The record gives the reactivity of an RNA of 207 nucleotides to 2A3 and DMS. 2A3 is a SHAPE reagent: it acylates the 2'-hydroxyl of flexible nucleotides of all four kinds. The DMS profile rests on 4,832 reads.
RNA sequence: GGGAACGACUCGAGUAGAGUCGAAAAUGACAUAGCUAAAUCACCUCGGUAUGAUUAGGGUGAGACCUAGGAACCGUAGGGGUAUUCUCAAAGGAAGCUUUUGCAGUGACGCCCAUGUAAGUGGGAUAAGAACCAACCCACUUCGGUGGGUUGGUAACAUAAUAUACAAGUUCGCUUGUAUAUUAUGAAAAGAAACAACAACAACAAC
Reactivity to 2A3 in 0.01 (KOAc 150mM, MgCl2 10mM, bicine 150mM(pH8.5), 24C), signal-to-noise 4, nucleotides 027 to 156: u130g030a020c000a060u110a030g000c030u100a090a030a070u110c050a100c020c010u040c040g020g020u300a180u190g050a090u050u050a020g000g010g020u070g080a100g030a050c000c000u020a020g050g000a020a020c010c010g050u110a020g000g020g000g000u020a060u100u070c080u020c030a120a130a030g090g010a060a030g030c010u070u110u120u190g050c040a040g010u020g050a040c110g010c000c010c010a010u050g070u170a070a160g010u010g000g000g010a030u070a070a060g060a010a000c000c000a000a000c010c000c000a000c010u030u040c110g050g000u000g000g000g010u000u000g000g000u000a000a000
Reactivity to DMS in 0.01 (KOAc 150mM, MgCl2 10mM, bicine 150mM(pH8.5), 24C), signal-to-noise 2, nucleotides 027 to 156: u000g010a110c010a090u010a080g000c050u000a080a060a110u010c010a040c020c000u000c040g030g040u000a080u010g020a190u000u000a050g010g020g010u000g020a180g010a160c020c020u010a100g000g020a110a090c050c020g000u000a050g030g000g010g020u000a050u000u000c030u000c030a080a120a160g020g010a140a090g000c020u000u000u000u010g030c030a100g000u000g010a110c060g010c000c010c000a050u000g010u000a070a180g020u000g000g000g010a060u000a040a100g010a130a070c020c000a010a030c030c000c000a020c000u000u030c280g030g090u000g000g010g030u000u000g010g010u010a000a050